Annotation:
The record gives the reactivity of an RNA of 177 nucleotides to DMS and 2A3. For DMS the reverse transcriptase was MarathonRT. The RNA was probed in 150 mM KOAc, 10 mM MgCl2 and 150 mM bicine (pH 8.5) at 24 C. It was measured as part of the RMDB library OK1LIB. Reactivities are rounded to 0.1 and cut off at 0 and 3.
RNA sequence: GGGAACGACUCGAGUAGAGUCGAAAAAGUAGAAAAUUCCAACCGUCAAAUUCUAGUGACUACACUAUUUUUGUCGCUGAAGUUGCAUCAACUUGUAACGAAGCACUUUUAAGUGAUUAUAUGGAUAUGGACAAGCAUUUUUCGAAAUGCUUGUCCAAAAAGAAACAACAACAACAAC
Reactivity to DMS in 0.01 (KOAc 150mM, MgCl2 10mM, bicine 150mM(pH8.5), 24C), signal-to-noise 3, nucleotides 027 to 126: a080g000u020a050g010a070a080a050a160u020u000c030c030a110a100c130c030g000u010c010a060a040a240u090u010c110u000a070g040u000g000a070c100u010a100c040a000c020u000a040u000u000u020u000u020g000u000c070g000c090u000g000a060a120g000u010u000g030c010a030u080c300a140a110c290u000u000g060u020a030a030c060g020a270a060g010c010a060c030u010u010u020u010a040a020g000u000g010a100u020u010a030u040a150u050g030g000a040u010a110
Reactivity to 2A3 in 0.01 (KOAc 150mM, MgCl2 10mM, bicine 150mM(pH8.5), 24C), signal-to-noise 3, nucleotides 027 to 126: a010g110u120a040g080a030a070a000a010u150u000c010c010a070a080c050c050g030u030c000a000a040a090u150u010c040u040a060g080u030g080a060c030u180a080c030a000c000u020a300u050u100u000u080u010g010u040c070g000c010u010g060a180a030g000u010u020g020c020a050u070c030a120a160c200u030u010g010u020a020a000c040g020a070a010g020c000a000c000u040u030u050u050a140a040g010u020g020a050u070u300a020u050a100u130g010g050a010u060a070